[RMDB]
RNA sequence: GGGAACGACUCGAGUAGAGUCGAAAAUGGUGAAGGAUUUUAGUGUCAAAGGACAGAUGGUUAGCUUACAGGAGGAAGGCGAGGAGUAUACGCCGCGUCAGGGACUAUAUGCUAACUUAAGUUCUAGUGGGAGAAUAAAUUUCGAUUUAUUCUCCCAAAAAGAAACAACAACAACAAC
Reactivity to DMS in 0.01 (KOAc 150mM, MgCl2 10mM, bicine 150mM(pH8.5), 24C), signal-to-noise 9, nucleotides 027 to 126: u010g010g020u010g010a080a060g010g000a080u010u010u010u010a080g030u010g010u010c070a090a080a070g020g000a020c030a040g000a110u010g000g000u000u000a020g010c010u000u010a030c080a020g000g010a140g030g030a210a190g000g010c010g000a040g000g000a090g010u020a120u050a120c210g010c010c020g010c010g010u000c010a090g010g000g010a290c010u000a090u000a010u000g010c010u000a010a020c020u000u010a100a160g000u000u000c010u010a110g020
Reactivity to 2A3 in 0.01 (KOAc 150mM, MgCl2 10mM, bicine 150mM(pH8.5), 24C), signal-to-noise 4, nucleotides 027 to 126: u150g040g000u060g020a080a010g040g060a070u050u110u120u140a130g030u120g030u110c060a130a100a060g010g000a000c000a000g140a080u080g040g010u000u000a000g000c010u020u040a030c020a040g000g060a030g040g020a120a050g010g000c000g010a030g010g010a030g030u120a080u040a170c130g000c020c000g030c010g020u010c010a030g090g030g040a010c000u010a020u000a010u160g000c000u010a000a010c000u030u020a000a040g010u010u000c010u000a030g080